[RMDB]
RNA sequence: GGGAACGACUCGAGUAGAGUCGAAAAAAGAAGUACGUGUGCCUCUUCUUCUAUCCUGCGGACUGGACCUUCGUGUGUCCUUCAGAGAUCAUCGCAUUUGGUGAGGCCUAUUCCGAAUUUCAGAAAAACUGUAGGGGAUAUUCGUAUCCCCUACAGUAAAAGAAACAACAACAACAAC
Reactivity to 2A3 in 0.01 (KOAc 150mM, MgCl2 10mM, bicine 150mM(pH8.5), 24C), signal-to-noise 1, nucleotides 027 to 126: a010a000g060a050a010g010u100a020c110g050u120g100u130g040c030c060u000c000u030u030c020u000u000c010u010a060u040c000c000u010g110c030g030g060a020c060u060g050g010a030c000c030u060u000c130g090u040g060u030g010u170c020c000u030u000c040a130g120a020g020a210u040c020a030u030c050g000c140a040u090u110u200g000g070u030g000a010g020g050c090c010u060a010u130u040c030c010g030a070a130u000u090u050c090a130g060a060a060a000a050
Reactivity to DMS in 0.01 (KOAc 150mM, MgCl2 10mM, bicine 150mM(pH8.5), 24C), signal-to-noise 3, nucleotides 027 to 126: a020a030g000a030a010g020u010a040c100g020u000g020u020g030c060c040u010c020u010u010c010u000u000c050u000a140u000c020c010u010g020c090g010g000a060c130u000g020g000a030c030c040u010u010c070g030u010g030u010g000u000c050c030u000u010c160a120g000a170g000a060u000c070a050u000c060g000c080a100u000u000u010g020g000u010g000a030g010g010c020c030u000a050u000u000c010c000g020a090a090u010u010u000c100a090g010a110a100a080a080